About this RNA: Chemical mapping of a 207-nucleotide RNA with DMS and 2A3. Reactivities are given for positions 27 through 156. Reactivities are rounded to 0.1 and cut off at 0 and 3. 2A3 adducts were read by reverse transcription with SuperScript II with manganese. The RNA was probed in 150 mM KOAc, 10 mM MgCl2 and 150 mM bicine (pH 8.5) at 24 C.

RNA sequence: GGGAACGACUCGAGUAGAGUCGAAAAAGGAGAAAUAGCUGUGAACACAACAGACAUAGCACCUGCCUUCACAGGGCUGUUAUCUCAGUGGAGGGAAUCAGAAACUGAGCAGGCAAACAGAUGCAUCAGUGCCGGGAAGAAAGUAGAAUGGUGUAGGCGAUAUUCGUGAUUUCGAUCACGAAUAUCGAAAAGAAACAACAACAACAAC
Reactivity to DMS in 0.01 (KOAc 150mM, MgCl2 10mM, bicine 150mM(pH8.5), 24C), signal-to-noise 1, nucleotides 027 to 156: a110g020g020a050g040a020a080a070u000a040g020c050u000g000u000g020a060a140c160a160c050a030a090c020a080g020a080c030a110u000a130g010c000a070c020c010u000g010c020c050u020u000c060a070c010a040g000g020g010c050u000g030u040u000a020u020c050u000c010a150g020u000g000g000a140g010g000g000a030a130u000c070a070g010a140a050a140c030u010g020a060g000c040a070g020g020c070a100a000a120c040a120g040a100u000g000c030a080u010c040a050g000u010g000c060c060g000g000g010a060a050g000a030a030a050g000u000a070g000a020a070u000g000g020u000g000u000a150g050g000
Reactivity to 2A3 in 0.01 (KOAc 150mM, MgCl2 10mM, bicine 150mM(pH8.5), 24C), signal-to-noise 3, nucleotides 027 to 156: a000g100g020a040g010a010a040a050u090a020g000c020u000g010u050g100a130a020c060a020c040a220a050c040a030g080a040c050a060u110a010g000c010a090c030c020u010g000c010c040u070u080c070a030c020a050g040g020g010c010u030g030u110u090a130u050c040u020c040a040g000u040g020g050a040g020g010g040a020a050u110c020a030g090a030a070a040c010u020g000a010g010c050a030g070g000c040a070a090a010c030a060g040a060u070g000c010a050u030c030a010g010u010g070c020c030g020g010g000a010a020g030a010a090a010g030u070a020g050a100a070u120g040g000u010g030u040a050g000g030